[RMDB]
Structure probing data (DMS and 2A3) for a 177-nucleotide construct. The RNA was probed in 150 mM KOAc, 10 mM MgCl2 and 150 mM bicine (pH 8.5) at 24 C.
RNA sequence: GGGAACGACUCGAGUAGAGUCGAAAAGUUAUUUACAUAUCUUGGGGAGAUUUAGAGUAUAAACUCUAAGAUCUUUGGUAUUUAAGUGUCAACAUCGAUUUAUUUAUUUAUUGCUGAGCUGACUGUACUAAUACGCUACCUUCGGGUAGCGUAUUAGAAAAGAAACAACAACAACAAC
Reactivity to DMS in 0.01 (KOAc 150mM, MgCl2 10mM, bicine 150mM(pH8.5), 24C), signal-to-noise 2, nucleotides 027 to 126: g020u030u010a060u000u000u000a060c050a040u010a050u000c030u020u010g020g020g000g020a070g000a040u020u010u000a020g020a010g000u020a180u050a070a150a080c010u000c010u000a010a020g000a060u000c000u000u000u010g010g010u000a020u000u030u010a040a040g010u010g000u000c040a010a030c070a090u000c020g010a080u000u000u010a070u020u040u000a070u020u000u000a040u000u000g020c050u040g000a060g000c040u000g010a080c040u000g000u000a170
Reactivity to 2A3 in 0.01 (KOAc 150mM, MgCl2 10mM, bicine 150mM(pH8.5), 24C), signal-to-noise 3, nucleotides 027 to 126: g040u020u000a130u200u090u130a030c040a010u060a030u010c030u090u140g060g000g030g000a040g010a060u000u010u090a000g000a010g160u050a050u190a300a300a020c000u000c000u000a000a010g070a050u010c000u030u070u080g020g000u010a110u020u140u070a140a070g050u070g010u110c040a050a050c020a100u040c040g020a030u000u140u000a050u060u160u010a100u010u150u020a090u110u010g060c050u070g000a010g000c000u000g070a090c020u070g000u030a060